Structure probing data (DMS and 2A3) for a 177-nucleotide construct. The 2A3 profile rests on 4,885 reads. 2A3 adducts were read by reverse transcription with SuperScript II with manganese. For DMS, 2,695 sequencing reads were counted. The data come from the RNA Mapping Database (RMDB), library OK2TST. Reactivities are given for positions 27 through 126. DMS adducts were read by reverse transcription with MarathonRT. Conditions: 150 mM KOAc, 10 mM MgCl2 and 150 mM bicine (pH 8.5), 24 C.
RNA sequence: GGGAACGACUCGAGUAGAGUCGAAAAUGCAAUCGCUUUCCACUAAGCGUCGGCACAUGACCAUCGCGCAGGUGACGCAUCGCACCGGCAUCCUUACGCGCACGGCGCACGAUGCGCUGCGUCGUCGGCUUAACGCAUACUUCGGUAUGCGUUAAGCAAAAGAAACAACAACAACAAC
Reactivity to DMS in 0.01 (KOAc 150mM, MgCl2 10mM, bicine 150mM(pH8.5), 24C), signal-to-noise 3, nucleotides 027 to 126: u010g000c060a090a070u010c070g010c020u000u010u000c100c140a120c130u010a100a060g000c030g040u010c290g010g000c060a060c150a100u000g010a100c020c030a080u000c090g000c070g010c060a070g010g010u000g000a020c060g000c020a020u000c020g000c030a030c000c010g000g000c070a080u000c050c040u000u010a080c110g020c040g030c030a070c160g000g000c180g000c030a130c000g000a040u000g010c020g010c080u010g010c000g010u000c010g010u000c050g010
Reactivity to 2A3 in 0.01 (KOAc 150mM, MgCl2 10mM, bicine 150mM(pH8.5), 24C), signal-to-noise 3, nucleotides 027 to 126: u110g000c040a030a210u100c050g040c060u050u040u020c080c040a060c090u090a040a010g020c000g020u030c090g040g010c040a020c030a160u150g070a100c000c010a040u080c100g020c000g000c070a030g060g000u030g020a010c000g010c010a010u010c010g010c000a010c000c000g020g020c010a120u150c040c020u140u190a080c120g010c000g020c070a070c150g080g000c000g000c010a020c040g040a030u040g030c000g030c040u000g010c000g010u030c000g010u000c030g030